About this RNA:
This 207-nucleotide RNA was probed chemically with 2A3.
[RMDB]
RNA sequence: GGGAACGACUCGAGUAGAGUCGAAAACGUCGCGAUGCAGGCACGGCUGCACGCUGAGCCUGAGGAGCACGCACUGCGUCUUCGGAGGGAAGUCUACGACGCCUCGGUCAAGCGCUAUAUAUCUGCGAUUUCACAUGUGCUGCCUCAAGUGCCCAGGGUAAUCGCCCUGAUUCGUCAGGGCGAUUACAAAAGAAACAACAACAACAAC
Reactivity to 2A3 in 0.01 (KOAc 150mM, MgCl2 10mM, bicine 150mM(pH8.5), 24C), signal-to-noise 1, nucleotides 027 to 156: c020g110u060c060g000c030g060a110u040g000c010a000g030g030c110a020c090g090g010c010u060g000c140a000c030g000c030u030g020a010g030c000c000u020g020a030g000g010a030g000c050a000c000g030c010a030c030u110g000c000g020u060c030u090u110c050g080g010a050g000g050g160a000a200g010u000c020u280a000c150g030a000c000g300c150c030u020c090g050g000u130c060a080a120g040c030g000c080u010a040u030a110u010a070u300c170u050g120c030g100a140u070u130u170c130a150c030a020u300g000u010g000c040u180g210c000c000u020c000a010a030g010u070g020c050c020c000a080g000g140
2A3 adducts were read by reverse transcription with SuperScript II with manganese.